Structure probing data (2A3 and DMS) for a 177-nucleotide construct. The 2A3 profile rests on 1,433 reads.
RNA sequence: GGGAACGACUCGAGUAGAGUCGAAAACGCCAGACACAACACAUUCCGCGAGAUGGUGGUCAAUCUCCAUCGCUCCCAGGCCGGUCAGCUUCUGCCCUGUGAAGUCGUUGAGAACGUCAGCAACGUCCCAGGUCCAUAUUUUCGAAUAUGGACCUGGAAAAGAAACAACAACAACAAC
Reactivity to 2A3 in 0.01 (KOAc 150mM, MgCl2 10mM, bicine 150mM(pH8.5), 24C), signal-to-noise 1, nucleotides 027 to 126: c040g020c030c020a030g040a010c020a010c030a060a160c020a010c000a150u090u000c060c020g030c040g030a030g020a150u070g010g040u010g020g050u070c080a120a130u050c010u000c030c000a030u010c030g000c000u000c000c000c000a010g010g060c010c010g060g030u030c030a020g020c000u050u030c010u040g040c030c000c000u060g000u070g170a080a050g070u070c010g030u050u080g010a040g010a190a040c020g080u020c040a010g030c030a050a040c000g020u050c000
Reactivity to DMS in 0.01 (KOAc 150mM, MgCl2 10mM, bicine 150mM(pH8.5), 24C), signal-to-noise 2, nucleotides 027 to 126: c140g020c050c030a050g000a110c040a110c080a030a100c040a110c110a130u000u000c070c050g000c120g000a060g000a060u000g040g020u000g000g000u000c130a050a090u010c050u000c000c030a040u000c040g010c090u000c020c030c030a130g010g020c050c040g010g010u010c050a080g010c030u010u010c040u000g010c030c000c010u000g030u000g000a060a120g000u000c040g000u010u000g000a100g030a100a040c090g010u000c020a050g000c040a080a060c080g000u020c150